[RMDB]
RNA sequence: GGGAACGACUCGAGUAGAGUCGAAAAGACGCUCUCAAGAAGGAGGAGAUUUCCCAGACGCUGGAGACUCACGGAAUUUCAUUCAAGAAGAAGGUAACGGAGAAAGGAGCGGGCCUCCCGCUCCGAGCUCAUCCAUACUGUUCGCAGUAUGGAUGAGAAAAGAAACAACAACAACAAC
Reactivity to DMS in 0.01 (KOAc 150mM, MgCl2 10mM, bicine 150mM(pH8.5), 24C), signal-to-noise 2, nucleotides 027 to 126: g010a110c150g020c020u000c010u010c020a110a130g020a140a130g010g000a100g010g000a070g010a110u000u000u010c030c010c000a140g000a080c090g000c090u000g010g020a080g010a070c010u000c060a080c110g000g000a110a070u010u000u000c080a100u000u000c080a090a060g020a060a030g020a070a060g020g000u020a030a090c040g010g010a090g000a080a090a100g000g010a030g000c020g000g000g020c160c080u010c030c000c030g020c010u000c000c010g000a050g010
Reactivity to 2A3 in 0.01 (KOAc 150mM, MgCl2 10mM, bicine 150mM(pH8.5), 24C), signal-to-noise 2, nucleotides 027 to 126: g000a010c040g020c010u030c010u000c050a030a100g140a080a040g150g080a030g040g030a050g010a040u030u030u000c030c010c000a020g060a000c050g040c040u080g000g020a030g010a030c010u030c040a060c030g000g040a040a040u060u140u140c040a050u150u090c020a080a090g100a030a000g010a010a020g090g030u030a050a040c050g010g020a040g140a070a080a040g020g000a000g010c010g000g020g000c000c110u120c010c020c000g010c000u000c010c010g010a000g000
The record gives the reactivity of an RNA of 177 nucleotides to DMS and 2A3.
DMS adducts were read by reverse transcription with MarathonRT.
The RNA was probed in 150 mM KOAc, 10 mM MgCl2 and 150 mM bicine (pH 8.5) at 24 C.
For DMS, 1,624 sequencing reads were counted.
It was measured as part of the RMDB library VIROID.